[RMDB]
RNA sequence: GGGAACGACUCGAGUAGAGUCGAAAAUCGAUUUAUGGCAUUCACGUCGGGCAAAUGCUGCUGACCCGUGCUGAUAUGGAAGACCGUGAACGCUUCCUGAACGCCCGCGACACCCUGCGAGCGUUGCCACCCACCCGAAAUUCGUUUCGGGUGGGUGAAAAGAAACAACAACAACAAC
Reactivity to DMS in 0.01 (KOAc 150mM, MgCl2 10mM, bicine 150mM(pH8.5), 24C), signal-to-noise 1, nucleotides 027 to 126: u020c080g010a110u000u000u000a030u010g010g000c080a130u000u010c000a080c040g020u000c000g030g000g020c050a110a060a110u010g030c100u010g070c080u010g010a110c000c030c050g010u000g010c060u000g000a070u000a100u000g000g000a060a070g000a170c100c020g050u010g010a020a020c080g000c190u000u000c020c010u000g030a040a010c010g010c010c000c000g020c010g030a090c120a130c170c080c030u000g020c000g000a020g040c000g010u000u000g030c100
Reactivity to 2A3 in 0.01 (KOAc 150mM, MgCl2 10mM, bicine 150mM(pH8.5), 24C), signal-to-noise 1, nucleotides 027 to 126: u110c010g030a000u020u020u040a110u210g000g000c020a000u000u030c030a010c060g060u050c010g020g000g020c030a030a120a180u170g050c040u030g000c080u080g150a280c010c000c010g020u040g030c010u070g020a090u010a070u290g070g090a120a020g120a120c000c070g000u040g010a060a000c030g000c000u030u000c000c050u030g000a020a010c010g010c030c020c000g010c010g000a020c010a090c020c010c010u010g000c000g020a010g000c010g000u000u030g110c010